About this RNA: The data come from the RNA Mapping Database (RMDB), library 15KREP. This 177-nucleotide RNA was probed chemically with 2A3 and DMS. The RNA was probed in 150 mM KOAc, 10 mM MgCl2 and 150 mM bicine (pH 8.5) at 24 C. 2A3 is a SHAPE reagent: it acylates the 2'-hydroxyl of flexible nucleotides of all four kinds. The DMS profile rests on 7,458 reads.
[RMDB]
RNA sequence: GGGAACGACUCGAGUAGAGUCGAAAAAUGCACAACUAUGGUAUUGUUGUCUUCUGUGUAUCACUUGUAUGUCUUCAAUCAGGUCUUAUCAAGUGAUGUUAUGUUUGAAGAUGCCCAAGGUUUGAAACAACUCUAAAUGGUUCGCCAUUUAGAGUUGAAAAGAAACAACAACAACAAC
Reactivity to 2A3 in 0.01 (KOAc 150mM, MgCl2 10mM, bicine 150mM(pH8.5), 24C), signal-to-noise 3, nucleotides 027 to 126: a000u070g030c040a040c010a150a060c060u110a110u240g040g020u050a030u040u110g060u050u070g020u010c030u010u010c020u010g060u030g020u050a000u030c000a000c020u010u000g000u030a030u100g020u010c000u040u060c030a040a240u050c030a030g060g050u000c020u070u130a090u130c040a000a070g020u010g070a010u000g010u030u080a080u040g090u010u020u120g000a010a000g000a000u010g000c000c000c010a010a040g080g020u000u070u160g050a040a030a010
Reactivity to DMS in 0.01 (KOAc 150mM, MgCl2 10mM, bicine 150mM(pH8.5), 24C), signal-to-noise 6, nucleotides 027 to 126: a050u000g020c060a060c070a060a070c090u000a140u010g010g010u000a080u000u000g000u000u000g010u000c050u000u000c010u000g020u000g000u010a060u000c000a030c000u000u000g010u010a040u010g010u010c010u000u000c120a100a100u010c260a050g000g000u000c030u000u000a150u020c040a050a020g020u000g010a020u000g000u010u010a060u000g010u010u010u000g010a020a020g000a020u000g010c120c050c010a080a190g000g000u000u010u000g000a160a130a190